[RMDB]
RNA sequence: GGGAACGACUCGAGUAGAGUCGAAAAAGGAAGUGUGGGAAUUGUGCAGCCCGAUCUUGGUAAUCCCUCUGAUCCGAAUCAAGAUAUCAUCUUCGAUUGGGCGGAGUUCACCGUGCAUAGUGGCACGGGGGCCACUUACAUUCGUGUAAGUGGCCCCAAAAGAAACAACAACAACAAC
Reactivity to 2A3 in 0.01 (KOAc 150mM, MgCl2 10mM, bicine 150mM(pH8.5), 24C), signal-to-noise 1, nucleotides 027 to 126: a020g040g000a000a000g000u070g000u110g000g000g150a000a120u090u140g060u050g150c040a020g000c000c000c020g000a010u010c010u010u040g020g030u070a090a070u030c040c040c000u060c030u040g030a140u090c010c040g080a000a040u000c020a010a000g010a010u080a090u200c110a010u000c070u020u060c060g060a060u000u010g060g000g030c000g020g000a060g020u040u190c130a090c070c040g010u010g000c010a080u120a290g210u180g120g000c010a000c020g000
Reactivity to DMS in 0.01 (KOAc 150mM, MgCl2 10mM, bicine 150mM(pH8.5), 24C), signal-to-noise 1, nucleotides 027 to 126: a060g010g000a050a030g010u000g020u040g010g030g000a080a100u000u000g010u000g010c120a110g030c010c000c010g000a020u000c040u000u000g000g030u000a160a100u000c020c060c000u000c030u000g010a100u010c040c020g000a100a050u000c000a050a020g030a010u000a160u010c240a160u010c020u000u000c150g020a030u000u000g020g000g020c060g000g000a080g000u000u000c090a110c050c020g040u000g020c000a080u010a080g000u000g010g000c000a030c030g000